[RMDB]
RNA sequence: GGGAACGACUCGAGUAGAGUCGAAAAGAUAUGGACCCGUAUGGAGAUGCUGGGUCGGAAACGACCCACAUCGAUGAAGUACCGGGUCCUAAGUCAAAACGAUUCAAAGCUUCGGCUUUGAAUCGAAGUCUAUUGGCAUGUUCGCAUGCCAAUAGACAAAAGAAACAACAACAACAAC
Reactivity to DMS in 0.01 (KOAc 150mM, MgCl2 10mM, bicine 150mM(pH8.5), 24C), signal-to-noise 1, nucleotides 027 to 126: g000a010u000a010u000g000g010a000c000c000c010g010u000a000u010g010g000a060g010a000u000g010c300u000g000g000g040u010c000g000g000a010a020a020c000g010a010c000c010c000a010c000a020u000c000g030a150u000g000a150a180g000u020a030c140c250g020g000g000u000c010c000u020a010a070g010u000c000a100a110a110a240c010g020a000u000u000c000a020a000a000g010c000u000u020c190g060g030c000u030u000u000g000a000a000u000c010g000a010a060
Reactivity to 2A3 in 0.01 (KOAc 150mM, MgCl2 10mM, bicine 150mM(pH8.5), 24C), signal-to-noise 1, nucleotides 027 to 126: g000a000u010a010u050g000g000a000c000c000c000g000u000a000u040g020g030a030g020a020u030g040c280u020g030g000g000u010c000g000g000a010a000a000c000g000a000c020c000c010a000c000a010u000c000g020a300u030g010a000a000g030u010a030c270c300g080g000g000u000c010c010u000a000a000g000u010c000a020a000a120a140c020g000a000u000u000c000a000a000a040g000c000u070u250c300g130g000c000u040u050u010g000a000a010u010c000g000a010a030